Source: RMDB library OK2TRN, as collected in RNAgym. Structure probing data (2A3 and DMS) for a 177-nucleotide construct.
[RMDB]
RNA sequence: GGGAACGACUCGAGUAGAGUCGAAAACAAUACAGUCACUGAAGGAUGGUGGUUGUGUCCUUCACAUGAAGAUAAGCAUGAAGAACAUAUUGUGAACAAUUAUAGAAUUAUAAACAAUGUUAAAGUAACCAUUACCACGAUUCGUCGUGGUAAUGGUAAAAGAAACAACAACAACAAC
Reactivity to 2A3 in 0.01 (KOAc 150mM, MgCl2 10mM, bicine 150mM(pH8.5), 24C), signal-to-noise 1, nucleotides 027 to 126: c100a040a050u090a070c000a010g090u020c000a020c140u040g150a080a030g150g060a100u150g030g010u040g000g000u060u010g020u000g000u020c000c000u040u020c040a020c020a060u070g090a070a140g100a300u070a170a000g010c030a020u040g060a190a080g060a040a050c020a010u050a030u050u060g000u020g020a030a050c000a110a000u080u160a170u150a230g090a010a120u110u020a110u090a010a090a050c000a000a050u100g010u120u110a100a200a060g050u000a090
Reactivity to DMS in 0.01 (KOAc 150mM, MgCl2 10mM, bicine 150mM(pH8.5), 24C), signal-to-noise 2, nucleotides 027 to 126: c100a120a030u000a040c110a140g000u010c070a090c120u010g000a070a080g020g000a070u010g020g010u000g000g000u010u020g010u030g000u000c000c000u000u000c040a120c060a020u010g020a050a070g010a120u010a130a060g010c050a040u000g000a110a080g000a070a100c130a080u000a010u020u020g010u000g010a100a160c140a030a030u010u000a150u000a180g010a060a050u000u010a060u000a050a050a050c030a050a030u000g000u000u000a010a030a100g020u010a120
For DMS the reverse transcriptase was MarathonRT.